This 177-nucleotide RNA was probed chemically with 2A3 and DMS. Source: RMDB library M2PK50, as collected in RNAgym. For DMS the reverse transcriptase was MarathonRT. For DMS, 657 sequencing reads were counted.
[RMDB]
RNA sequence: GGGAACGACUCGAGUAGAGUCGAAAAUACCAAUGGUUCGCCAUUGGUACUUGUAUUGACGAAUACUACCGUAGAAGUAUUCAGGUCUCAUAACUUCGGAUAUACACUAGAGUUUCGACUCUAGUAACUUAGUCGUCAACUUCGGUUGACGACUAAGAAAAGAAACAACAACAACAAC
Reactivity to 2A3 in 0.01 (KOAc 150mM, MgCl2 10mM, bicine 150mM(pH8.5), 24C), signal-to-noise 1, nucleotides 027 to 126: u030a000c000c000a000a000u040g010g010u040u030c300g050c040c020a010u000u020g010g010u010a020c020u030u110g050u110a190u030u160g040a010c020g020a010a010u010a000c010u040a120c000c020g070u130a060g060a250a040g020u020a020u000u040c030a050g090g030u000c030u000c040a070u180a220a070c040u020u040c040g130g010a020u060a010u040a120c080a010c020u010a010g000a000g020u000u120u140c140g050a010c010u000c000u010a000g000u000a000a000
Reactivity to DMS in 0.01 (KOAc 150mM, MgCl2 10mM, bicine 150mM(pH8.5), 24C), signal-to-noise 1, nucleotides 027 to 126: u000a010c000c000a000a010u010g000g010u000u000c170g010c000c010a000u010u000g000g000u000a000c040u000u000g010u030a040u000u000g030a190c070g000a080a080u000a000c000u010a120c050c200g000u000a080g010a140a060g010u000a010u000u000c000a070g000g000u000c070u000c110a090u010a110a050c110u040u000c100g000g010a170u000a060u010a110c210a060c000u000a040g010a040g020u000u000u040c190g040a050c000u040c020u000a000g000u000a020a110